[RMDB]
RNA sequence: GGGAACGACUCGAGUAGAGUCGAAAAAUUUAGUUAUGGUAGACAAACACUUAAUUGCUUAAGGUCACUCGUUAUCGCAAGUUCGACUAUAUCACUGACAUUGAAAAACAACGACUCAUAAAAUAUAGUGGGCUUGAUGAUUCGUCAUCAAGCCCACAAAAGAAACAACAACAACAAC
Reactivity to 2A3 in 0.01 (KOAc 150mM, MgCl2 10mM, bicine 150mM(pH8.5), 24C), signal-to-noise 1, nucleotides 027 to 126: a000u270u290u090a060g000u060u020a010u020g050g220u000a140g000a200c000a000a050a000c010a090c040u070u090a040a030u010u270g040c000u020u190a080a000g000g000u000c000a000c110u200c000g170u000u000a030u010c110g000c290a070a000g040u000u040c000g140a140c040u070a000u000a000u090c060a130c090u110g000a000c170a150u030u090g060a090a060a000a000a000c000a030a000c000g000a010c090u000c000a020u300a070a000a190a000u280a000u030a030